RNA sequence: GGGAACGACUCGAGUAGAGUCGAAAAGUCAGUCAACUGGCAGGACCCGGAAAAGCCAGUGACUGACAAACCGGGUCCAGCUCAGAAAAUAAAGUAUCCGAUAAGGAUACAAAAGAAAAGUGAGCAAAAUACGGUAAGACUUCGGUCUUACCGUAUUAAAAGAAACAACAACAACAAC
Reactivity to DMS in 0.01 (KOAc 150mM, MgCl2 10mM, bicine 150mM(pH8.5), 24C), signal-to-noise 3, nucleotides 027 to 126: g000u010c010a010g010u010c040a060a070c020u000g010g020c000a180g020g010a160c050c010c030g000g000a090a060a150a150g000c000c010a010g010u010g010a070c000u000g000a000c000a030a080a050c060c050g000g000g000u010c050c070a180g000c000u000c020a020g000a140a060a070a120u000a110a140a180g020u000a000u000c000c000g000a180u080a100a140g010g000a000u000a000c010a020a050a080a070g000a060a140a100a070g000u000g010a000g000c000a100a050
Reactivity to 2A3 in 0.01 (KOAc 150mM, MgCl2 10mM, bicine 150mM(pH8.5), 24C), signal-to-noise 3, nucleotides 027 to 126: g000u000c010a000g000u020c020a060a080c170u010g010g000c020a030g060g060a050c000c020c000g070g010a220a160a000a020g010c000c000a020g010u000g030a020c000u020g000a000c010a000a080a000c010c010g020g040g000u010c070c030a030g000c010u000c000a010g150a100a090a020a000u180a040a100a010g000u000a020u000c010c010g030a080u140a300a020g000g000a000u000a000c000a000a080a010a000g080a000a060a000a020g090u020g000a000g000c030a150a000
This 177-nucleotide RNA was probed chemically with DMS and 2A3.
Reactivities are given for positions 27 through 126.
The RNA was probed in 150 mM KOAc, 10 mM MgCl2 and 150 mM bicine (pH 8.5) at 24 C.
Reactivities are rounded to 0.1 and cut off at 0 and 3.
2A3 adducts were read by reverse transcription with SuperScript II with manganese.